[RMDB]
RNA sequence: GGGAACGACUCGAGUAGAGUCGAAAAGGGCUGUGGAGGAAAAUUAACUUAUGCCUCGGUUUGAACGAAAAUGGUUAAACUUUAGGAGCAAACUGAAAGUACGUUGUUCCACCAUUGAGGCUAUAGGCCGCACAACUGAUUUCGAUCAGUUGUGCGGAAAAGAAACAACAACAACAAC
Reactivity to 2A3 in 0.01 (KOAc 150mM, MgCl2 10mM, bicine 150mM(pH8.5), 24C), signal-to-noise 3, nucleotides 027 to 126: g050g010g000c030u040g020u040g040g110a060g070g120a040a070a050a040u150u080a090a020c010u020u060a020u100g010c000c000u000c000g000g000u050u080u130g060a090a030c060g030a070a020a120a100u090g040g000u070u050a060a080a040c010u130u170u220a060g000g000a030g030c050a020a010a180c010u090g050a060a060a070g200u090a040c120g020u010u030g010u020u020c000c010a000c020c000a020u030u110g000a030g000g000c010u000a010u020a100g070g020
Reactivity to DMS in 0.01 (KOAc 150mM, MgCl2 10mM, bicine 150mM(pH8.5), 24C), signal-to-noise 3, nucleotides 027 to 126: g000g000g000c040u000g030u020g000g010a050g000g020a070a020a030a110u010u030a110a080c030u000u010a070u030g000c020c050u000c030g000g020u010u000u010g000a060a060c090g010a060a070a110a070u020g000g010u000u000a060a110a090c110u010u010u030a170g000g020a020g010c030a010a010a050c050u000g000a100a090a230g010u030a070c160g000u000u000g010u000u000c000c050a070c080c040a080u040u020g010a040g000g000c000u000a100u000a040g020g020
Structure probing data (2A3 and DMS) for a 177-nucleotide construct. Reactivities are rounded to 0.1 and cut off at 0 and 3. For 2A3 the reverse transcriptase was SuperScript II with manganese. Conditions: 150 mM KOAc, 10 mM MgCl2 and 150 mM bicine (pH 8.5), 24 C. Source: RMDB libraries RFM100 and RFMREP, as collected in RNAgym.